[RMDB]
RNA sequence: GGGAACGACUCGAGUAGAGUCGAAAAUACAGUCGUAGUUGCGGUUAUGGCCAUACAUAUAUACACGUGGUUGUAGCUGUAAUCGCGAUGCAUGUAUAUUAUGAUUAGCCAAUGCACCAGCCGACUGUGGUCACAAUGUAUCGUAUACGGUCGCGCACUAGUAGGAGAUAUUCGUAUCUCCUACUAGAAAAGAAACAACAACAACAAC
Reactivity to 2A3 in 0.01 (KOAc 150mM, MgCl2 10mM, bicine 150mM(pH8.5), 24C), signal-to-noise 9, nucleotides 027 to 156: u060a000c010a010g020u020c010g020u050a090g030u040u020g020c030g000g000u020u030a020u020g020g000c020c010a020u100a080c070a020u180a070u100a010u060a130c080a010c220g030u030g000g020u030u020g030u040a020g000c020u030g010u050a010a020u040c020g000c010g010a010u050g080c060a120u040g050u030a040u010a040u210u090a120u120g150a120u060u110a030g050c040c030a070a050u150g030c060a070c050c050a040g030c010c000g010a010c010u010g000u040g040g040u110c050a030c050a110a130u190g070u190a090u180c060g030u110a060u040a100c020g010g000u020c010g000c010g000c080a020
Reactivity to DMS in 0.01 (KOAc 150mM, MgCl2 10mM, bicine 150mM(pH8.5), 24C), signal-to-noise 4, nucleotides 027 to 156: u000a050c010a100g010u000c000g050u010a190g010u000u000g010c030g020g030u000u000a060u000g010g000c010c010a050u000a090c100a110u010a110u000a140u000a110c100a110c080g050u000g020g020u010u000g020u000a040g030c030u020g040u000a050a030u000c080g020c000g010a070u000g000c030a080u010g000u000a040u000a080u000u000a050u010g010a130u000u010a060g000c040c020a050a150u010g010c050a080c030c020a110g040c040c000g010a030c020u000g020u000g010g020u000c030a060c050a060a080u010g000u000a050u000c080g000u000a140u010a080c050g020g010u000c040g010c060g010c050a230